Structure probing data (DMS) for a 177-nucleotide construct. Conditions: 150 mM KOAc, 10 mM MgCl2 and 150 mM bicine (pH 8.5), 24 C. Reactivities are given for positions 27 through 126. It was measured as part of the RMDB library OK2TRN. In probing experiments dimethyl sulfate is read out at A N1 and C N3, which are open when not base-paired. For DMS the reverse transcriptase was MarathonRT.
[RMDB]
RNA sequence: GGGAACGACUCGAGUAGAGUCGAAAAUGUGCUGGUGGGGUGGUAUGAGGAGAAGCAGCGGCUGAAGGUGGUACUCUUCCAAGGAUAUAAGGAGAAGGCGGACGUUCCCUUCUGUGUCUUCAGAGUGUCACUUGCCAGUUUUCGAACUGGCAAGUGAAAAAGAAACAACAACAACAAC
Reactivity to DMS in 0.01 (KOAc 150mM, MgCl2 10mM, bicine 150mM(pH8.5), 24C), signal-to-noise 1, nucleotides 027 to 126: u000g020u010g020c070u000g010g040u000g020g040g020g000u000g000g020u000a030u010g010a100g000g020a140g010a140a120g030c060a040g050c130g000g000c090u020g010a100a110g040g020u010g000g010u020a040c090u000c090u010u030c030c080a160a100g000g000a050u000a110u010a050a060g000g000a060g000a050a080g020g010c070g020g000a230c040g010u000u000c010c000c010u000u010c020u000g020u000g020u000c040u020u010c050a000g010a040g000u020g020